[RMDB]
RNA sequence: GGGAACGACUCGAGUAGAGUCGAAAACGCUGGGCUCCGCUGCCACCAAACCACGACUGAAGCGCGCACGGUCGAGGUUUGUUGGCAUGAGCCUGUGCUGAAGCGCGCACGGCAACCGAAAGGUGCGAAAAGUGUCUGCCUGUUCGCAGGCAGACACCAGGAUUGGAUAGUUCGCUAUCCAAUCCUGAAAAGAAACAACAACAACAAC
Reactivity to 2A3 in 0.01 (KOAc 150mM, MgCl2 10mM, bicine 150mM(pH8.5), 24C), signal-to-noise 4, nucleotides 027 to 156: c060g020c020u050g000g010g000c000u000c000c000g030c020u000g010c000c000a030c030c000a020a000a000c000c000a030c020g020a000c010u040g060a240a080g080c070g010c030g010c090a030c030g000g000u000c010g000a040g010g000u000u000u000g020u000u020g000g000c020a020u050g000a020g000c030c010u010g000u050g000c010u100g030a130a040g020c050g000c010g000c050a020c020g050g020c040a090a080c040c020g090a160a050a020g070g000u020g010c020g020a060a070a010a040g000u000g000u010c000u000g000c010c000u030g030u060u100c300g010c130a000g000g000c000a000g000a000c000a000c000
Reactivity to DMS in 0.01 (KOAc 150mM, MgCl2 10mM, bicine 150mM(pH8.5), 24C), signal-to-noise 2, nucleotides 027 to 156: c060g010c030u010g000g020g000c020u010c000c070g010c060u000g010c000c020a010c050c000a020a030a040c000c020a240c000g010a050c010u000g000a060a040g010c030g010c050g030c020a300c000g010g000u000c040g030a070g010g010u000u000u000g000u000u000g030g040c000a010u000g000a080g000c000c000u000g000u000g000c050u020g000a110a140g020c060g010c000g020c000a230c070g000g010c090a120a130c010c050g000a080a100a220g000g010u010g020c020g000a040a060a080a150g030u010g000u010c010u000g000c000c000u010g010u000u000c300g050c030a030g020g030c000a000g020a010c010a000c010